[RMDB]
Structure probing data (DMS and 2A3) for a 207-nucleotide construct.
The RNA was probed in 150 mM KOAc, 10 mM MgCl2 and 150 mM bicine (pH 8.5) at 24 C.
Source: RMDB library OK3TST, as collected in RNAgym.
The DMS profile rests on 3,747 reads.
For 2A3 the reverse transcriptase was SuperScript II with manganese.
RNA sequence: GGGAACGACUCGAGUAGAGUCGAAAAUUAUUGCUUUCCGCUAAGCGGCGUCGGUCUGACCGAAUUGUACACCGGGGUGGCCAGAAACGGGGGCAAUUGGGCCGCCGACAAUGACGCCGCAGCCAGCCAAAUCGCCGUCGGCAAUGUGCACGCCAUGAUGGUGUGUUUAAUUCGUUAAACACACCAUAAAAGAAACAACAACAACAAC
Reactivity to DMS in 0.01 (KOAc 150mM, MgCl2 10mM, bicine 150mM(pH8.5), 24C), signal-to-noise 2, nucleotides 027 to 156: u000u000a040u010u010g000c020u000u000u000c020c040g030c040u010a110a170g030c000g060g020c030g030u010c000g030g010u000c030u000g030a160c000c050g000a070a100u000u010g070u000a110c090a170c130c020g010g040g010g090u000g020g020c020c020a110g000a060a130a120c050g020g010g040g030g020c080a060a190u000u010g020g010g010c000c020g030c010c010g030a030c060a100a070u010g030a040c030g030c040c020g050c000a030g000c010c040a180g020c050c010a060a130a100u010c050g030c030c020g030u010c050g010g000c060a050a050u000g040u030g010c000a030c020g000c020c010a080u000g000
Reactivity to 2A3 in 0.01 (KOAc 150mM, MgCl2 10mM, bicine 150mM(pH8.5), 24C), signal-to-noise 2, nucleotides 027 to 156: u120u040a100u050u130g000c000u090u060u090c080c030g010c070u080a170a000g000c000g010g000c000g010u010c010g030g000u000c070u110g110a100c000c000g020a030a040u110u170g080u100a030c030a010c070c010g030g010g010g060u030g030g020c020c040a060g220a080a150a080c080g010g000g000g010g000c030a010a060u040u030g090g030g000c000c050g070c010c000g000a000c000a010a110u160g010a000c000g000c030c000g000c000a010g000c000c000a000g010c010c010a050a100a030u120c060g020c040c010g050u070c050g010g000c000a010a030u070g020u010g000c060a010c070g000c010c010a060u140g000